[RMDB]
Annotation:
Chemical mapping of a 207-nucleotide RNA with 2A3 and DMS. Source: RMDB library M2RFOK, as collected in RNAgym. The 2A3 profile rests on 1,412 reads. The reactions ran in a buffer of 150 mM KOAc, 10 mM MgCl2 and 150 mM bicine (pH 8.5), at 24 C. For DMS, 2,986 sequencing reads were counted.
RNA sequence: GGGAACGACUCGAGUAGAGUCGAAAAAUCCUCAGGUUCAUAAGCGUGAUGAUUGGGUGUUCAUGCUCCAUGCGUGACAUGUGCCUCCUUUGAACCUUGUUACGACCUUGGCACAUUACCCAUCUGAAAAAGACGUUCGCGUUCGCGCGAACGUCAAGAUAAUCCCCUACUUCGGUAGGGGAUUAUCAAAAGAAACAACAACAACAAC
Reactivity to 2A3 in 0.01 (KOAc 150mM, MgCl2 10mM, bicine 150mM(pH8.5), 24C), signal-to-noise 3, nucleotides 027 to 156: a000u030c010c000u040c000a010g030g040u010u010c010a020u040a220a060g080c110g170u090g120a080u030g040a030u130u240g020g010g020u070g030u120u080c000a010u020g000c030u100c200c080a090u240g010c000g020u000g030a000c010a010u010g000u000g010c000c000u050c020c030u040u000u010g000a010a000c000c020u000u070g080u050u130a110c100g050a060c050c010u080u130g000g010c020a000c000a020u070u160a030c010c000c010a010u000c010u080g090a010a070a000a030a060g000a010c000g000u000u000c000g000c020g040u060u050c190g010c000g000c000g130a000a030c000g030u010c000a000a000
Reactivity to DMS in 0.01 (KOAc 150mM, MgCl2 10mM, bicine 150mM(pH8.5), 24C), signal-to-noise 1, nucleotides 027 to 156: a060u000c000c030u000c050a060g010g020u000u000c000a050u000a070a120g010c150g030u000g000a110u010g000a090u010u000g010g000g000u020g010u000u020c030a040u000g000c000u010c140c140a170u000g000c030g050u000g000a020c270a120u000g010u000g000c020c020u000c120c040u000u050u000g000a000a030c030c000u000u010g010u000u000a130c130g020a100c080c070u000u000g000g030c000a040c010a070u000u000a110c020c010c000a060u000c040u000g000a100a080a080a190a230g020a030c020g010u000u000c000g010c020g040u000u000c300g000c030g070c020g000a000a000c000g000u000c000a000a020